[RMDB]
RNA sequence: GGGAACGACUCGAGUAGAGUCGAAAACUUAUCACCCGAGGGGAUCUUCGCACACCCAAACUGCGGACAUUCGCUAAAGAUACCCAUGUUCUACUACCACAAAUAUUCCAUCCUAAGGGUAUGAAUGCAGCGUCUGGAAGUUCGCUUCCAGACGCUGAAAAGAAACAACAACAACAAC
Reactivity to 2A3 in 0.01 (KOAc 150mM, MgCl2 10mM, bicine 150mM(pH8.5), 24C), signal-to-noise 2, nucleotides 027 to 126: c000u080u010a020u180c000a050c000c040c060g000a070g000g010g010g000a030u070c000u200u130c100g050c050a000c000a060c000c000c000a130a120a090c120u110g010c010g020g000a020c000a150u170u100c190g020c070u040a110a060a060g050a000u150a210c000c000c000a030u020g100u000u020c020u000a040c000u000a010c000c000a080c050a020a260a070u130a120u130u000c000c000a020u070c020c070u000a100a150g000g040g000u070a070u210g140a000a000u170g000